This 177-nucleotide RNA was probed chemically with DMS and 2A3. For 2A3 the reverse transcriptase was SuperScript II with manganese. The RNA was probed in 150 mM KOAc, 10 mM MgCl2 and 150 mM bicine (pH 8.5) at 24 C. It was measured as part of the RMDB library OK2TST.
[RMDB]
RNA sequence: GGGAACGACUCGAGUAGAGUCGAAAACCACCAUAUUCGGUGCCACGGGCGGUGUGAUGGAGGCGGCCCUGCGCACGGCCUACGAGCUCAAGACCGGCAAGAGCCUCCCGAGAGUGGAGUUCGCCCAUCAAUACCUCCAUUUCGAUGGAGGUAUUGAAAAAGAAACAACAACAACAAC
Reactivity to DMS in 0.01 (KOAc 150mM, MgCl2 10mM, bicine 150mM(pH8.5), 24C), signal-to-noise 6, nucleotides 027 to 126: c050c010a150c080c070a080u010a110u010u010c070g010g030u000g010c050c040a120c190g010g000g020c020g020g000u000g020u000g010a150u010g020g010a090g000g000c050g020g020c020c010c020u000g010c100g000c040a080c030g010g010c020c010u010a120c110g010a150g010c050u000c060a100a080g010a080c030c020g010g010c070a130a140g000a130g000c020c040u010c030c010c030g000a090g000a110g030u000g000g000a100g000u000u010c060g000c010c000c020a150
Reactivity to 2A3 in 0.01 (KOAc 150mM, MgCl2 10mM, bicine 150mM(pH8.5), 24C), signal-to-noise 4, nucleotides 027 to 126: c000c010a030c010c030a080u090a190u210u200c110g060g000u050g010c020c020a090c090g040g010g000c040g040g030u060g040u060g070a130u110g010g040a030g010g040c030g040g040c020c010c000u040g020c050g000c050a060c030g040g000c000c010u110a120c080g060a050g030c020u020c070a020a060g040a120c010c020g010g000c040a070a050g020a030g090c000c000u010c000c000c010g050a100g000a020g050u110g000g030a040g010u060u040c030g000c010c000c010a020